[RMDB]
RNA sequence: GGGAACGACUCGAGUAGAGUCGAAAAUCGCUCAUGGUAUCGGUCCAUGCGUCUUUGAACGCUGUUUCGAACUCGACCCAGAGUUCUUCGCUCGCUUCGGUCAGGGGUAUCGGAGCCCGUACCAGUGUCAAUGAAAGAUUUUCGAAUCUUUCAUUGAAAAAGAAACAACAACAACAAC
Reactivity to DMS in 0.01 (KOAc 150mM, MgCl2 10mM, bicine 150mM(pH8.5), 24C), signal-to-noise 9, nucleotides 027 to 126: u010c120g010c060u000c050a110u000g010g010u000a020u010c160g010g010u000c100c120a060u000g010c020g010u000c030u010u010u010g010a100a020c020g010c020u000g010u000u000u000c070g000a020a040c030u000c010g000a100c050c030c080a180g000a020g000u000u000c090u000u010c140g010c040u000c070g010c100u010u000c130g010g000u010c040a160g020g000g010g010u010a040u000c040g010g010a040g000c040c010c020g010u000a030c020c010a060g010u000g000
Reactivity to 2A3 in 0.01 (KOAc 150mM, MgCl2 10mM, bicine 150mM(pH8.5), 24C), signal-to-noise 7, nucleotides 027 to 126: u080c030g010c050u070c060a130u040g010g000u050a060u220c080g030g040u020c040c020a040u080g000c020g090u000c070u120u180u230g050a070a010c020g000c030u030g030u030u060u060c030g010a040a020c010u000c020g040a090c010c020c030a010g000a000g020u080u050c030u100u050c040g010c020u030c020g040c040u090u080c030g010g020u010c030a100g090g060g000g010u050a080u070c010g000g030a020g010c000c010c000g000u020a010c000c010a030g030u020g030

Conditions: 150 mM KOAc, 10 mM MgCl2 and 150 mM bicine (pH 8.5), 24 C. Structure probing data (DMS and 2A3) for a 177-nucleotide construct. Values cover nucleotides 27 to 126. DMS adducts were read by reverse transcription with MarathonRT. For DMS, 34,272 sequencing reads were counted. The 2A3 profile rests on 28,118 reads. The data come from the RNA Mapping Database (RMDB), library OK2TST.